[RMDB]
Source information
The record gives the reactivity of an RNA of 207 nucleotides to 2A3. The 2A3 profile rests on 484 reads. It was measured as part of the RMDB library M2RFPK. The reactions ran in a buffer of 150 mM KOAc, 10 mM MgCl2 and 150 mM bicine (pH 8.5), at 24 C. High 2A3 reactivity points to a flexible backbone, as in loops and unpaired stretches.
RNA sequence: GGGAACGACUCGAGUAGAGUCGAAAACAAGAUCGGUGGAUACCAGCCCUAUCAAUAUCUAGGAGAACUGUGCUAUGUUUAGAAGAUUAGGUAGUCUCUAAACAGAACAAUUUACCUGCUGAACAAAAAAAUCCAAUGGCGUUCGCGCCAUUGGAAACAUGUCGAAUCACUUCGGUGAUUCGACAUGAAAAGAAACAACAACAACAAC
Reactivity to 2A3 in 0.01 (KOAc 150mM, MgCl2 10mM, bicine 150mM(pH8.5), 24C), signal-to-noise 1, nucleotides 027 to 156: c020a030a000g040a040u070c120g020g050u090g060g060a060u060a230c000c000a040g030c020c020c000u080a090u100c100a200a070u130a080u120c060u090a030g020g020a060g030a030a070c030u030g020u040g040c050u110a040u090g020u000u000u000a050g020a250a030g010a050u110u030a050g050g040u050a000g060u000c000u000c000u010a000a000a000c000a000g020a030a020c040a040a010u030u090u090a060c000c000u020g010c050u070g090a080a000c090a050a020a060a020a020a000a020u000c000c000a000a000u000g010g010c050g000u080u090c250g000c000g010c040c000a000u000u000g000g000a000a030a000